[RMDB]
RNA sequence: GGGAACGACUCGAGUAGAGUCGAAAACCGACAGCGCACCUUCAAAAGGGCGCUUAAUCCCCGGCCAAGCGCCGAAAUAUGAAUAGACACCGCUGGGCUGGUAGGGCUUCCGAACGUCCUGCGGUGUGAUUAAGUCUCUUUUCGAAGAGACUUAAUCAAAAGAAACAACAACAACAAC
Reactivity to 2A3 in 0.01 (KOAc 150mM, MgCl2 10mM, bicine 150mM(pH8.5), 24C), signal-to-noise 9, nucleotides 027 to 126: c030c010g030a060c060a040g000c010g020c060a300c140c000u070u130c070a090a110a070a050g010g000g010c000g000c000u000u000a000a010u000c000c020c000c000g000g000c000c030a260a090g060c120g010c140c020g040a020a030a000u300a130u170g140a090a060u090a090g090a020c000a000c000c000g000c000u030g000g020g000c010u030g030g060u010a020g020g020g050c090u300u120c020c000g010a040a010c010g010u000c000c000u000g000c000g000g000u000g000u000
Reactivity to DMS in 0.01 (KOAc 150mM, MgCl2 10mM, bicine 150mM(pH8.5), 24C), signal-to-noise 8, nucleotides 027 to 126: c100c070g010a140c280a020g010c000g000c010a120c000c000u010u020c290a100a070a140a090g000g000g000c000g010c000u000u030a060a110u000c030c010c020c020g010g010c010c020a100a140g030c120g020c000c010g020a020a080a050u030a090u020g010a140a090u030a120g010a090c000a010c010c000g000c000u000g000g000g000c000u000g000g000u000a060g000g000g030c270u040u050c010c000g010a100a260c300g000u000c000c000u000g010c010g000g010u000g000u000